[RMDB]
RNA sequence: GGGAACGACUCGAGUAGAGUCGAAAAGUCGGUCAAUGGGCUGUGUGGCGAAAGCCACCGCAACGUCAUCUUACAUUGACUGGUUUCCUACCGGGUUACUUGGCAGGAAAUAAGACUUAAGGUAACUGGUUUCCAAAAGGCCUGUUGGUCGGCAUGAGAGCCAGUUAUAGUUCGCUAUAACUGGCUCAAAAGAAACAACAACAACAAC
Reactivity to 2A3 in 0.01 (KOAc 150mM, MgCl2 10mM, bicine 150mM(pH8.5), 24C), signal-to-noise 1, nucleotides 027 to 156: g000u000c000g000g000u020c000a000a000u010g060g000g000c040u080g050u030g000u000g160g010c000g100a170a020a020g000c000c000a020c000c000g030c020a160a050c050g050u010c010a030u030c020u070u120a090c070a180u010u100g030a040c000u020g070g000u010u020u000c010c000u000a040c000c010g050g050g030u120u150a130c030u110u180g110g000c020a030g000g070a080a020a040u060a070a050g040a010c050u100u040a050a020g010g000u020a030a000c030u050g080g110u050u080u100c050c000a060a130a100a060g040g000c000c000u030g030u030u030g010g010u000c020g000g030c000a020u100g100a040